[RMDB]
RNA sequence: GGGAACGACUCGAGUAGAGUCGAAAAAAUUACACUAAUGAAUUUGACGUUCGCUAUUACAAUCAUUGCGUUGCGAACAUGCAUUCCGAUUGGAUAGACAUGUUUGAUUUCGAUGGCCUACCCGUCAACGUGGAUAAUACAAAUAUGGCACACGAACGGAAGAUACGGAAUUCGUUCCGUAUCUUCCAAAAGAAACAACAACAACAAC
Reactivity to 2A3 in 0.01 (KOAc 150mM, MgCl2 10mM, bicine 150mM(pH8.5), 24C), signal-to-noise 3, nucleotides 027 to 156: a000a000u300u180a070c060a000c050u110a060a170u160g100a080a060u110u070u070g080a000c030g000u020u010c050g010c050u030a040u070u070a160c050a040a070u070c030a070u060u110g030c030g030u020u110g040c000g040a000a010c010a010u020g020c000a000u020u070c040c070g220a300u110u250g000g010a010u030a060g040a130c060a070u000g050u040u030u030g120a200u040u070u090c070g010a070u070g010g000c000c020u020a060c000c020c010g040u070c020a020a060c050g000u070g050g020a040u050a150a030u130a170c130a030a070a000u190a060u020g030g020c030a020c010a000c170g110a110a000c010
Reactivity to DMS in 0.01 (KOAc 150mM, MgCl2 10mM, bicine 150mM(pH8.5), 24C), signal-to-noise 2, nucleotides 027 to 156: a050a060u010u000a150c060a240c020u000a090a130u010g020a060a130u010u000u000g030a040c090g000u010u000c060g020c010u000a100u000u010a060c070a070a110u020c130a060u000u010g000c110g060u000u010g000c030g000a090a000c030a020u010g030c030a280u010u000c070c000g040a250u020u000g060g020a050u000a090g020a140c000a030u010g030u000u000u030g020a160u000u030u010c040g020a140u000g040g010c010c020u000a060c000c030c000g030u000c020a050a070c060g030u000g000g010a130u000a030a090u000a260c050a040a030a100u000a110u000g000g000c110a070c030a080c060g030a070a210c140
The record gives the reactivity of an RNA of 207 nucleotides to 2A3 and DMS.
The RNA was probed in 150 mM KOAc, 10 mM MgCl2 and 150 mM bicine (pH 8.5) at 24 C.
For DMS the reverse transcriptase was MarathonRT.
For 2A3 the reverse transcriptase was SuperScript II with manganese.